An RNA of 177 nucleotides, treated with DMS and 2A3 and read out base by base. Reactivities are given for positions 27 through 126.
[RMDB]
RNA sequence: GGGAACGACUCGAGUAGAGUCGAAAAAGGGCCUGCUAUAAGGAGUAAUUCGCCCCCUGAGCACUACAUUAAUUAAAAAAGACAAUUGGAAGCUCGUUGUGUGGGACUAUUCCUUUCCCAUUGCACCCGGAUGUGUUUAAUUCGUUAAACACAUCCGAAAAGAAACAACAACAACAAC
Reactivity to DMS in 0.01 (KOAc 150mM, MgCl2 10mM, bicine 150mM(pH8.5), 24C), signal-to-noise 2, nucleotides 027 to 126: a040g000g020g010c200c180u000g030c020u000a100u010a020a000g010g000a030g000u000a040a120u010u010c140g010c020c000c000c030c040u010g020a040g010c000a060c070u000a110c080a020u000u010a070a150u020u020a010a020a110a070a070a080g000a160c120a030a070u010u000g000g010a140a080g000c000u000c010g000u000u000g010u000g040u000g030g010g010a040c090u000a030u000u000c000c010u010u000u010c020c000c020a100u000u000g010c050a090c070c070
Reactivity to 2A3 in 0.01 (KOAc 150mM, MgCl2 10mM, bicine 150mM(pH8.5), 24C), signal-to-noise 1, nucleotides 027 to 126: a000g040g020g010c050c080u050g030c070u100a110u020a170a010g000g040a020g000u030a040a170u100u060c080g130c000c000c010c020c020u020g000a010g000c040a010c080u090a000c060a040u140u080a110a110u150u190a160a100a030a130a000a040g110a020c040a040a040u050u000g000g000a070a040g010c010u010c060g090u170u200g030u000g020u100g070g020g000a000c010u020a000u030u030c000c000u010u050u000c020c000c000a010u000u090g000c040a070c000c010

2A3 adducts were read by reverse transcription with SuperScript II with manganese. High DMS reactivity at an A or C suggests that its Watson-Crick edge is free. Source: RMDB library OK2TRN, as collected in RNAgym. The RNA was probed in 150 mM KOAc, 10 mM MgCl2 and 150 mM bicine (pH 8.5) at 24 C. For DMS, 1,628 sequencing reads were counted. DMS adducts were read by reverse transcription with MarathonRT.